[RMDB]
The record gives the reactivity of an RNA of 177 nucleotides to 2A3. The RNA was probed in 150 mM KOAc, 10 mM MgCl2 and 150 mM bicine (pH 8.5) at 24 C.
RNA sequence: GGGAACGACUCGAGUAGAGUCGAAAACAUGUGCGCUUGAACUGCGGCGCUCGGGCAGAGUCGAGAGCCCUUCUGGUUCGUUGCUUGACUGAAGAAAUAUUCAUCAAGCUGCGGUGCCGCGGCACCGUCUACUGUGCGGGUUCGCUCGUACGGUAGAAAAAGAAACAACAACAACAAC
Reactivity to 2A3 in 0.01 (KOAc 150mM, MgCl2 10mM, bicine 150mM(pH8.5), 24C), signal-to-noise 2, nucleotides 027 to 126: c050a030u110g030u050g010c040g010c040u030u090g050a070a020c030u040g000c040g030g000c010g000c000u010c010g000g060g010c060a040g010a020g100u030c020g020a010g000a030g070c020c000c000u030u070c070u070g060g020u040u020c020g000u010u050g000c000u000u000g010a040c130u000g000a020a000g000a000a300a000u300a230u010u000c000a010u000c000a000a000g000c000u010g000c010g000g030u060g000c000c020g070c080g030g000c000a010c010c020g020